[RMDB]
RNA sequence: GGGAACGACUCGAGUAGAGUCGAAAAUAAUAUUUGCUGAUCAACCUACCAAUGUGGAUGAAUGGGAAAGAAUGCACCAUGCACUGCAACCUUGGUCUAAUAGGUUAGGUAAACAAUGCAAGUACCACUUCUAAACUCCUUUCGAGGAGUUUAGAAGAAAAGAAACAACAACAACAAC
Reactivity to DMS in 0.01 (KOAc 150mM, MgCl2 10mM, bicine 150mM(pH8.5), 24C), signal-to-noise 4, nucleotides 027 to 126: u010a110a190u000a020u010u000u000g010c010u000g010a280u010c150a170a070c010c000u000a040c030c010a050a090u010g000u000g000g000a010u000g010a040a020u010g000g000g000a110a090a110g000a090a050u000g020c020a140c210c170a100u020g010c030a010c060u020g010c070a100a200c020c000u000u000g000g000u000c030u010a070a030u000a150g000g000u000u010a020g010g000u000a060a060a080c130a030a100u010g000c010a010a010g010u010a060c030c010a200
Reactivity to 2A3 in 0.01 (KOAc 150mM, MgCl2 10mM, bicine 150mM(pH8.5), 24C), signal-to-noise 3, nucleotides 027 to 126: u060a040a030u030a030u030u020u030g020c000u010g040a110u100c040a040a020c000c000u020a010c000c010a060a070u210g010u030g050g030a060u040g110a090a120u080g010g020g050a110a120a050g100a120a060u090g010c020a040c090c120a070u190g000c030a020c040u040g010c030a010a090c010c020u030u040g090g000u010c030u070a060a060u030a070g040g000u120u090a010g000g020u030a060a080a030c040a070a050u140g020c020a000a000g000u000a090c020c020a040

This 177-nucleotide RNA was probed chemically with DMS and 2A3. Reactivities are given for positions 27 through 126. DMS adducts were read by reverse transcription with MarathonRT. High DMS reactivity at an A or C suggests that its Watson-Crick edge is free. For 2A3, 3,505 sequencing reads were counted. The RNA was probed in 150 mM KOAc, 10 mM MgCl2 and 150 mM bicine (pH 8.5) at 24 C.